[RMDB]
RNA sequence: GGGAACGACUCGAGUAGAGUCGAAAACCAACCGCCUUCGGGCGGUUGGGAUGACAGUCGCGAGGAAAGUCCGGGCUGACUGUCCACGACAGAUCCCGGCUUAAAUCUAUCGCUUCGGCGAUAGAAAAGUGGAAGGUAUAUUCGUAUACCUUCCACUAAAAGAAACAACAACAACAAC
Reactivity to 2A3 in 0.01 (KOAc 150mM, MgCl2 10mM, bicine 150mM(pH8.5), 24C), signal-to-noise 4, nucleotides 027 to 126: c000c000a010a000c000c000g060c000c010u060u080c240g120g000g000c000g010g010u000u010g020g010g000a040u120g000a000c020a010g020u010c020g000c050g130a090g060g090a260a110a050g110u040c010c010g050g080g000c060u110g030a040c010u010g010u000c000c030a080c070g120a020c020a010g090a060u050c020c010c000g020g020c050u080u150a080a120a120u000c000u010a010u000c000g000c000u030u030c170g120g000c000g000a000u000a000g010a010a060a010
Reactivity to DMS in 0.01 (KOAc 150mM, MgCl2 10mM, bicine 150mM(pH8.5), 24C), signal-to-noise 6, nucleotides 027 to 126: c000c000a010a010c000c010g020c000c000u000u010c210g030g030g040c000g000g010u000u010g000g000g010a060u000g000a050c030a030g010u000c010g010c050g020a300g010g010a130a120a110g010u010c010c010g010g000g010c070u010g010a030c010u000g000u000c000c090a080c100g000a050c080a090g000a150u000c000c000c000g000g010c080u010u000a040a110a140u000c000u000a000u000c000g010c000u000u010c190g020g010c000g000a010u000a000g000a010a000a060

Chemical mapping of a 177-nucleotide RNA with 2A3 and DMS. 2A3 adducts were read by reverse transcription with SuperScript II with manganese. Reactivities are given for positions 27 through 126. For 2A3, 5,643 sequencing reads were counted.